[RMDB]
RNA sequence: GGGAACGACUCGAGUAGAGUCGAAAAAUAUUGGGCUUAUCAGUGUGACUUGCUUUGGUCAGUAGAGUACAGAUGCUCCUCGACUUGUGAUGGAGUUACAUCCCAAUAAAACCAUCAUAAGCUGAAACAAUCUAUCCGCAUUCGUGCGGAUAGAUUGAAAAGAAACAACAACAACAAC
Reactivity to 2A3 in 0.01 (KOAc 150mM, MgCl2 10mM, bicine 150mM(pH8.5), 24C), signal-to-noise 2, nucleotides 027 to 126: a020u120a080u080u040g010g000g020c040u160u110a080u300c080a080g070u050g030u040g170a070c000u000u070g050c010u110u120u100g000g030u050c000a030g000u040a030g030a010g030u010a030c040a070g100a080u090g030c000u020c010c000u040c040g090a110c040u050u050g020u020g070a050u080g010g050a060g000u010u010a000c000a040u030c000c010c000a000a000u030a010a020a000a010c040c000a010u050c000a040u060a100a060g050c060u050g100a060a100a060
Reactivity to DMS in 0.01 (KOAc 150mM, MgCl2 10mM, bicine 150mM(pH8.5), 24C), signal-to-noise 2, nucleotides 027 to 126: a120u010a040u000u000g020g010g020c190u000u010a060u000c090a060g030u010g000u010g010a070c030u000u000g000c050u000u000u010g010g020u000c080a060g000u000a060g000a060g030u010a160c060a100g000a120u000g000c050u020c040c090u000c050g010a050c000u000u020g010u000g000a040u000g020g000a060g000u000u000a030c100a090u010c010c000c010a090a280u000a020a030a040a060c000c000a020u000c020a030u000a000a050g010c050u000g000a110a130a200
Structure probing data (2A3 and DMS) for a 177-nucleotide construct.
The 2A3 profile rests on 1,674 reads.
The RNA was probed in 150 mM KOAc, 10 mM MgCl2 and 150 mM bicine (pH 8.5) at 24 C.